Notes:
An RNA of 177 nucleotides, treated with 2A3 and DMS and read out base by base. For DMS the reverse transcriptase was MarathonRT. Source: RMDB library TTRDES, as collected in RNAgym. The DMS profile rests on 4,288 reads. The RNA was probed in 150 mM KOAc, 10 mM MgCl2 and 150 mM bicine (pH 8.5) at 24 C.

RNA sequence: GGGAACGACUCGAGUAGAGUCGAAAAGAUAUGGACCGUACAGGGAGCUCGGUGGUCGGAAACGACCACGGAGCGAGGAUCUGUCACGGUCCUAAGUCAAACGCGACCUGCUUCGGCAGGUCGCGAACUUAGAUGUAAGGUUCGCCUUACAUCUAAGAAAAGAAACAACAACAACAAC
Reactivity to 2A3 in 0.01 (KOAc 150mM, MgCl2 10mM, bicine 150mM(pH8.5), 24C), signal-to-noise 2, nucleotides 027 to 126: g010a000u030a010u080g000g000a000c020c010g030u110a000c000a010g010g030g050a050g000c010u040c190g300g010u000g020g010u000c010g000g030a020a020a010c010g010a010c020c010a000c050g060g010a000g010c010g000a020g000g000a010u000c010u010g010u050c110a040c170g000g000u000c000c000u000a000a000g000u000c000a040a040a060c040g020c000g020a010c040c000u020g110c000u100u140c260g150g000c030a010g100g040u010c020g020c000g000a010a000
Reactivity to DMS in 0.01 (KOAc 150mM, MgCl2 10mM, bicine 150mM(pH8.5), 24C), signal-to-noise 2, nucleotides 027 to 126: g000a020u000a110u020g000g010a010c000c000g000u000a030c010a000g010g000g000a030g020c000u010c000g030g080u000g010g010u000c000g020g010a020a030a070c010g000a010c010c010a010c000g000g010a020g020c000g020a050g030g000a030u010c010u000g000u000c230a010c030g000g000u000c010c000u000a010a080g000u000c020a090a130a200c050g050c000g010a050c010c000u020g040c030u000u000c240g020g010c010a010g000g000u000c000g010c000g020a010a060